[RMDB]
RNA sequence: GGGAACGACUCGAGUAGAGUCGAAAACAUCAUGCUCAGCCAAAGUACAGACCAGCUGUAUCGGCAGGAUCCGGGGCCACCUGGGAGGCGAACAUGGAGAAUGAUUUUUAGGCUCACAUGCCUGGCCCAUGAUUAGCAGGUUCGCCUGCUAAUCAUGAAAAGAAACAACAACAACAAC
Reactivity to 2A3 in 0.01 (KOAc 150mM, MgCl2 10mM, bicine 150mM(pH8.5), 24C), signal-to-noise 4, nucleotides 027 to 126: c010a050u050c010a010u060g000c020u030c050a040g020c030c010a070a070a020g040u030a040c000a010g070a140c010c070a050g190c020u020g020u060a060u100c040g040g000c010a030g020g050a040u040c030c020g000g000g030g010c020c030a060c020c010u030g030g040g000a070g020g010c030g010a030a010c030a080u110g080g020a060g060a080a070u100g070a110u080u040u030u030u130a020g000g000c000u040c060a150c030a070u180g010c000c000u010g040g000c000c010
Reactivity to DMS in 0.01 (KOAc 150mM, MgCl2 10mM, bicine 150mM(pH8.5), 24C), signal-to-noise 6, nucleotides 027 to 126: c090a070u010c040a030u000g010c040u000c050a130g000c020c030a070a100a160g010u000a050c060a040g010a200c180c160a110g010c010u000g010u000a030u000c090g010g000c040a050g010g000a080u000c040c040g020g000g010g000c110c120a050c040c010u010g010g000g000a110g020g010c030g020a030a050c070a040u000g010g000a060g000a110a040u010g000a060u000u010u000u010u010a060g000g010c010u010c140a080c220a070u010g000c010c010u000g000g010c030c020